[RMDB]
RNA sequence: GGGAACGACUCGAGUAGAGUCGAAAAAGAAUUGUACCACCACUGCGUAUCCUAAACGGGCUCUGCAGUGGUUAUUCUUGUAAAGUACUAGGAGUGAAUAGUGGCCCGUAUUGCAGGCAUUAACAUCAAAAGGCAAUCCACUUCGGUGGAUUGCCAACUAUAUUCCACUCUUCGGAGUGGAAUAUAGAAAAGAAACAACAACAACAAC
Reactivity to DMS in 0.01 (KOAc 150mM, MgCl2 10mM, bicine 150mM(pH8.5), 24C), signal-to-noise 2, nucleotides 027 to 156: a030g010a080a060u000u010g010u010a150c070c070a150c010c010a020c000u000g000c000g030u000a060u000c010c020u000a060a100a090c140g010g020g010c030u000c060u000g000c000a050g020u000g020g010u010u000a010u000u010c020u020u010g010u010a060a110a160g000u000a060c050u000a050g020g000a080g010u000g010a070a080u000a070g010u000g020g000c010c020c010g000u000a100u000u010g020c050a060g010g010c040a080u000u020a040a100c080a110u000c090a060a050a080a110g010g020c010a000a030u000c020c010a030c000u000u020c300g060g000u000g020g010a020u000u000g010c020c010a000a000
Reactivity to 2A3 in 0.01 (KOAc 150mM, MgCl2 10mM, bicine 150mM(pH8.5), 24C), signal-to-noise 2, nucleotides 027 to 156: a000g070a020a020u130u080g020u090a090c000c050a000c000c000a000c020u000g000c010g010u060a050u150c030c030u110a220a150a030c060g000g010g030c040u030c090u100g020c000a000g000u000g000g000u000u000a000u010u000c000u010u030g050u090a040a090a140g030u020a090c080u090a060g050g030a040g040u020g050a070a080u080a190g040u070g070g030c050c010c010g000u050a120u020u170g040c080a010g010g000c030a050u150u060a140a030c020a100u230c070a040a090a030a020g020g000c000a000a000u020c000c020a020c030u020u090c170g040g000u000g000g020a000u000u000g000c010c000a010a000